[RMDB]
RNA sequence: GGGAACGACUCGAGUAGAGUCGAAAACAGAGGGGGAAUGAGCCUCGUCGUCGACGAAGGGGUGCAUUCCGAGUGCCUGAGCUGGUCGACGUCCAGCUCCCUCGGGACCACGCUGCUCUGGGCGGAAGAGUCUUCUGACUUUUCUAGCCUAUUCAGCCAUCACAGAAUGGUUCGCCAUUCUGUGAUGAAAAGAAACAACAACAACAAC
Reactivity to DMS in 0.01 (KOAc 150mM, MgCl2 10mM, bicine 150mM(pH8.5), 24C), signal-to-noise 1, nucleotides 027 to 156: c030a130g010a050g000g000g020g000g000a060a070u000g010a050g010c000c010u000c040g010u000c010g010u010c190g040a240c080g010a070a070g020g010g010g010u010g000c060a110u000u000c050c030g030a070g010u000g040c160c070u000g030a060g010c010u020g010g040u000c060g040a220c260g020u000c010c000a050g020c000u000c010c010c010u010c020g000g000g020a080c020c040a130c220g010c000u000g000c000u000c040u000g010g000g020c000g010g000a020a010g000a010g020u010c000u000u000c300u010g010a000c000u000u000u010u000c010u000a150g040c000c010u000a010u020u010c010a080g040c010
Reactivity to 2A3 in 0.01 (KOAc 150mM, MgCl2 10mM, bicine 150mM(pH8.5), 24C), signal-to-noise 3, nucleotides 027 to 156: c110a020g070a090g090g010g000g000g030a030a050u100g020a060g040c010c030u010c000g020u000c000g060u060c130g070a200c020g020a050a050g010g010g000g030u040g040c020a020u060u050c020c010g040a020g020u110g070c030c100u100g010a030g000c000u020g030g020u080c140g160a130c090g080u070c000c000a000g000c000u000c000c000c000u000c000g000g010g000a010c040c030a080c110g000c000u000g000c000u000c000u010g010g010g000c010g020g010a000a010g000a000g000u010c000u250u130c240u300g020a020c000u000u000u000u000c000u040a210g000c000c000u010a000u030u060c000a000g000c010